Conditions: 150 mM KOAc, 10 mM MgCl2 and 150 mM bicine (pH 8.5), 24 C. This 177-nucleotide RNA was probed chemically with DMS and 2A3. For DMS the reverse transcriptase was MarathonRT. It was measured as part of the RMDB library RFM100. Reactivities are given for positions 27 through 126. For 2A3 the reverse transcriptase was SuperScript II with manganese. The 2A3 profile rests on 818 reads.
[RMDB]
RNA sequence: GGGAACGACUCGAGUAGAGUCGAAAAGUUAAAAGGGAGGAAGGGUCAGACCGCAGGACUUGCGGUGCGGUAUUGUGGAGACAUACCGCAAGGUUUCCAUCAAGCCUGAUGGUUACAAGGCGGCUUCUAGACGUCGAGAUUUCGAUCUCGACGUCUAAAAAGAAACAACAACAACAAC
Reactivity to DMS in 0.01 (KOAc 150mM, MgCl2 10mM, bicine 150mM(pH8.5), 24C), signal-to-noise 2, nucleotides 027 to 126: g000u000u020a090a130a070a120g000g000g020a040g010g030a110a080g000g020g020u000c120a170g000a080c020c000g000c000a040g000g020a150c140u030u000g010c050g010g010u020g000c030g000g020u000a020u020u000g020u000g000g040a130g020a020c020a100u030a020c010c000g010c000a130a020g010g000u000u010u010c010c010a000u010c020a020a200g000c150c140u000g000a050u020g000g000u010u000a050c030a110a100g010g000c070g020g000c070u000u030c120
Reactivity to 2A3 in 0.01 (KOAc 150mM, MgCl2 10mM, bicine 150mM(pH8.5), 24C), signal-to-noise 2, nucleotides 027 to 126: g130u120u150a020a060a000a030g060g010g000a130g000g120a060a000g010g000g000u060c000a020g060a070c000c060g000c000a000g110g090a160c090u040u040g040c000g010g040u010g000c000g000g000u090a100u040u300g020u060g030g040a060g000a020c040a000u060a040c020c000g000c000a000a000g040g000u000u010u000c020c000a000u000c000a050a050g130c030c210u070g000a000u000g000g000u010u010a030c010a040a030g050g040c010g000g010c030u000u020c020